Record summary:
The record gives the reactivity of an RNA of 207 nucleotides to 2A3. For 2A3, 822 sequencing reads were counted. Conditions: 150 mM KOAc, 10 mM MgCl2 and 150 mM bicine (pH 8.5), 24 C. The data come from the RNA Mapping Database (RMDB), library M2RFPK.
RNA sequence: GGGAACGACUCGAGUAGAGUCGAAAAGUGAACGAUCUCGGUUGUUUCUCUGAAGGCAUCAUCACCCCGUCCGAUGCGGAAGUUCGUGCUUCCGUCGAACGCGAAAGUCGGACGGCGGCCAUGAGUCAAUAUGUUUAAGGCUUCGGCCUUAAACAAAGAGAGAGUACCAGUUCGCUGGUACUCUCUCAAAAGAAACAACAACAACAAC
Reactivity to 2A3 in 0.01 (KOAc 150mM, MgCl2 10mM, bicine 150mM(pH8.5), 24C), signal-to-noise 2, nucleotides 027 to 156: g130u050g040a110a020c070g040a150u020c040u030c100g030g060u000u000g010u000u020u000c020u000c070u040g060a210a110g040g000c020a290u000c000a000u010c010a040c000c000c000c000g010u010c000c000g000a010u050g000c030g000g020a000a000g000u230u300c230g080u300g110c000u000u000c010c000g030u020c040g030a190a040c160g000c020g180a120a020a000g070u010c010g010g000a020c010g010g000c020g000g000c080c000a010u020g030a000g000u000c000a060a090u050a130u180g000u000u000u000a000a000g000g000c010u010u040c220g090g000c000c000u000u010a000a000a000c010a000a010a000